[RMDB]
RNA sequence: GGGAACGACUCGAGUAGAGUCGAAAAACACCCAGUGUGCUGUAAUUGCUGUUGUUGCUGCUGUUCUUAAUAGCUUGUGCAUCUGCUUUGUUACCUCUAUACCAUUGUGUAUAGUACCUUACACUGCCUGGGCCCGUGUUCGCACGGGCCAAAAGAAACAACAACAACAAC
Reactivity to DMS in 0.01 (KOAc 150mM, MgCl2 10mM, bicine 150mM(pH8.5), 24C), signal-to-noise 1, nucleotides 027 to 129: a000c300a250c000c300c000a140g020u170g000u060g180c000u100g130u000a080a080u000u000g000c000u010g000u000u200g000u000u000g090c000u000g150c000u000g180u040u040c060u000u010a120a000u110a040g000c040u000u000g000u110g000c010a220u000c150u000g000c160u000u000u100g000u000u000a000c250c020u210c000u000a000u000a000c000c000a000u000u010g000u030g000u110a000u000a090g000u000a060c000c010u130u010a000c010a040c000u070g000c080c100u000g000